[RMDB]
The record gives the reactivity of an RNA of 177 nucleotides to DMS. The data come from the RNA Mapping Database (RMDB), library M2PK50. Reactivities are given for positions 27 through 126. The RNA was probed in 150 mM KOAc, 10 mM MgCl2 and 150 mM bicine (pH 8.5) at 24 C. For DMS the reverse transcriptase was MarathonRT.
RNA sequence: GGGAACGACUCGAGUAGAGUCGAAAAGCCGAAGAGUUCGCUCUUCGGCGACGAAUUUGGCGUAGAUGAGAGUCUACAGUACUAGCCAUCCCAGUUGUACAAAUAAGCAUUGCUUCGGCAAUGCUAACUAGUGAUACGGCUUCGGCCGUAUCACUAGAAAAGAAACAACAACAACAAC
Reactivity to DMS in 0.01 (KOAc 150mM, MgCl2 10mM, bicine 150mM(pH8.5), 24C), signal-to-noise 1, nucleotides 027 to 126: g020c000c020g010a000a000g020a020g030u000u000c190g000c000u000c000u020u010c000g010g000c000g010a030c170g010a100a160u000u010u000g010g050c000g050u000a010g000a050u010g030a150g000a230g000u010c010u010a020c020a180g020u010a020c100u010a240g010c010c000a110u000c000c000c010a090g000u000u000g090u000a020c040a100a060a100u010a070a050g000c000a010u000u000g010c000u000u010c190g010g010c010a010a000u000g000c000u010a020a020